[RMDB]
RNA sequence: GGGAACGACUCGAGUAGAGUCGAAAACAACGGCAUCUCCCUGACGGGAGGUGGUCGUAGUUGAUGAUUAAUCCGGGACCGCGUGAGGCAGUAACCUGAGCAGCGAAAACGGAUAGCUGCGGGCGGCAGACGGAUCGCAUGCCUGAGUGGGCGGCUGCACCUAUCACUACUUCGGUAGUGAUAGGUGAAAAGAAACAACAACAACAAC
Reactivity to DMS in 0.01 (KOAc 150mM, MgCl2 10mM, bicine 150mM(pH8.5), 24C), signal-to-noise 1, nucleotides 027 to 156: c070a120a050c000g040g030c000a020u000c030u000c000c000c020u010g070a300c300g000g000g010a010g000g040u000g030g000u000c000g020u000a160g010u000u000g000a170u000g020a210u000u000a090a090u000c020c020g000g000g000a050c030c000g010c010g060u000g000a080g030g030c030a160g030u000a080a090c030c000u010g040a140g030c060a040g000c050g000a110a060a100a300c100g020g000a100u000a150g000c010u000g040c010g040g000g010c000g010g000c000a060g010a300c010g010g030a110u000c020g010c000a150u000g020c000c000u000g010a210g000u000g010g030g050c020g010g040c030u020g000
Reactivity to 2A3 in 0.01 (KOAc 150mM, MgCl2 10mM, bicine 150mM(pH8.5), 24C), signal-to-noise 2, nucleotides 027 to 156: c020a010a000c000g000g000c000a010u010c030u010c000c000c070u140g160a110c140g000g000g000a000g000g000u000g020g100u030c020g000u000a030g010u000u060g060a170u050g000a040u040u200a080a040u050c000c020g020g000g100a090c030c010g050c030g080u090g080a120g060g050c070a050g040u030a080a080c010c020u050g060a060g040c060a020g040c040g090a040a030a030a070c090g000g010a040u020a050g020c000u010g000c000g020g050g000c000g000g000c000a020g100a170c040g000g020a020u050c010g000c060a050u160g020c000c000u050g040a060g090u170g020g030g000c000g020g020c000u020g030